[RMDB]
RNA sequence: GGGAACGACUCGAGUAGAGUCGAAAAGAUAUGGAUGAACUGCACUAUGUCAUCGAUCUCGGAAACGAGGGAGACAAGUGUUUCAUCCUAAGUCAAAUCUUCGUACGCGUUCGCGCGUACGAAGAAACGGGUACUAUGAGUUCGCUCAUAGUACCCGAAAAGAAACAACAACAACAAC
Reactivity to 2A3 in 0.01 (KOAc 150mM, MgCl2 10mM, bicine 150mM(pH8.5), 24C), signal-to-noise 2, nucleotides 027 to 126: g030a000u060a030u150g020g000a010u030g000a010a050c150u210g120c030a000c020u240a300u300g000u010c030a200u300c120g040a090u010c020u020c000g000g010a050a070a050c000g000a000g020g000g000a000g000a010c010a020a030g000u020g020u020u000u000c000a010u000c000c010u040a120a010g000u010c030a050a000a300u000c010u020u000c000g000u000a000c020g030c010g050u020u090c300g030c000g010c000g190u000a000c010g020a010a000g010a000a000a000
Reactivity to DMS in 0.01 (KOAc 150mM, MgCl2 10mM, bicine 150mM(pH8.5), 24C), signal-to-noise 2, nucleotides 027 to 126: g010a030u010a300u020g010g000a020u000g000a000a050c300u020g010c000a030c010u000a070u010g020u000c000a250u030c200g000a040u000c000u000c000g000g000a140a060a120c010g020a000g010g010g000a060g000a010c020a010a010g000u010g020u000u000u010c000a010u000c010c000u010a030a080g020u010c030a030a160a220u000c000u000u000c000g000u000a020c000g030c000g010u030u010c250g000c030g020c000g000u000a010c000g000a000a000g000a010a010a140
This 177-nucleotide RNA was probed chemically with 2A3 and DMS.
For 2A3, 3,273 sequencing reads were counted.
Values cover nucleotides 27 to 126.
The data come from the RNA Mapping Database (RMDB), library TTRDEL.
The RNA was probed in 150 mM KOAc, 10 mM MgCl2 and 150 mM bicine (pH 8.5) at 24 C.